[RMDB]
RNA sequence: GGGAACGACUCGAGUAGAGUCGAAAAGUGGCAGCGGUGGCGGUAGCGAUGAAUCAUUACUGUCGCAGUCGCUACGAUCUGGUGGCGAUCCUCAAAACGCUGGGGGCAGGGCGAGCGCAACUGCGUAGCAUUGCCUAUUCUUCGGAAUAGGCAAUGCAAAAGAAACAACAACAACAAC
Reactivity to 2A3 in 0.01 (KOAc 150mM, MgCl2 10mM, bicine 150mM(pH8.5), 24C), signal-to-noise 3, nucleotides 027 to 126: g050u040g000g030c030a010g000c040g100g050u060g030g000c050g010g040u010a010g050c000g020a020u080g140a070a130u090c080a070u010u260a040c090u100g040u070c030g000c030a020g020u040c000g000c030u040a020c010g050a160u050c070u170g060g010u050g030g000c020g040a090u120c010c010u080c000a100a110a050a060c050g010c050u030g040g030g020g000g000c040a030g040g040g000c020g020a060g000c010g020c040a080a130c070u120g010c040g020u040a010
Reactivity to DMS in 0.01 (KOAc 150mM, MgCl2 10mM, bicine 150mM(pH8.5), 24C), signal-to-noise 3, nucleotides 027 to 126: g010u000g000g030c030a090g000c060g030g020u000g020g050c030g020g000u000a040g010c030g010a040u000g000a160a110u020c080a090u020u000a070c090u000g010u000c020g030c020a170g000u010c020g010c000u000a010c020g000a070u010c100u020g010g020u000g010g000c020g010a080u000c030c050u000c140a080a070a070a120c120g000c060u000g010g020g000g000g000c040a070g000g000g020c080g010a110g000c070g010c070a070a060c090u000g020c070g010u010a160
Chemical mapping of a 177-nucleotide RNA with 2A3 and DMS.
For DMS the reverse transcriptase was MarathonRT.
It was measured as part of the RMDB library OK2TRN.
The DMS profile rests on 3,346 reads.
Reactivities are rounded to 0.1 and cut off at 0 and 3.